[RMDB]
RNA sequence: GGGAACGACUCGAGUAGAGUCGAAAAGAAUUGUCAGUAUGCAUUUUCUCAUAUUGAGGAUUAAUUACUUUAAGUCAAUCAGCCUAUACUUGCAAUGGAUCAAUAACACAGUAGCCAAUAGAUGUAAACGUUAUCUUGACUUCGGUCAAGAUAACGUAAAAGAAACAACAACAACAAC
Reactivity to DMS in 0.01 (KOAc 150mM, MgCl2 10mM, bicine 150mM(pH8.5), 24C), signal-to-noise 1, nucleotides 027 to 126: g010a070a030u000u000g010u000c040a010g010u020a070u000g030c200a050u000u010u010u000c070u010c000a080u000a090u000u000g050a030g020g000a010u010u000a050a170u000u000a060c040u010u020u020a060a140g000u000c040a030a060u000c060a110g000c020c050u000a040u010a070c120u000u000g000c020a050a060u020g000g030a060u000c080a020a040u000a070a060c080a060c000a030g000u000a030g000c030c040a040a060u000a060g010a030u000g030u010a040a070
Reactivity to 2A3 in 0.01 (KOAc 150mM, MgCl2 10mM, bicine 150mM(pH8.5), 24C), signal-to-noise 1, nucleotides 027 to 126: g000a010a030u050u050g010u010c050a000g020u020a040u040g030c050a140u040u030u000u130c050u020c040a040u190a110u180u220g000a000g010g020a010u070u020a090a090u040u020a180c040u100u030u100a130a000g040u030c030a000a060u020c020a020g090c030c000u000a010u110a090c010u020u000g000c000a000a090u060g050g000a040u090c040a020a010u090a080a010c050a010c020a030g070u060a000g060c060c000a010a060u040a110g050a050u090g040u130a250a020
An RNA of 177 nucleotides, treated with DMS and 2A3 and read out base by base. Source: RMDB library OK2TST, as collected in RNAgym. Conditions: 150 mM KOAc, 10 mM MgCl2 and 150 mM bicine (pH 8.5), 24 C. For 2A3, 787 sequencing reads were counted. For DMS, 916 sequencing reads were counted.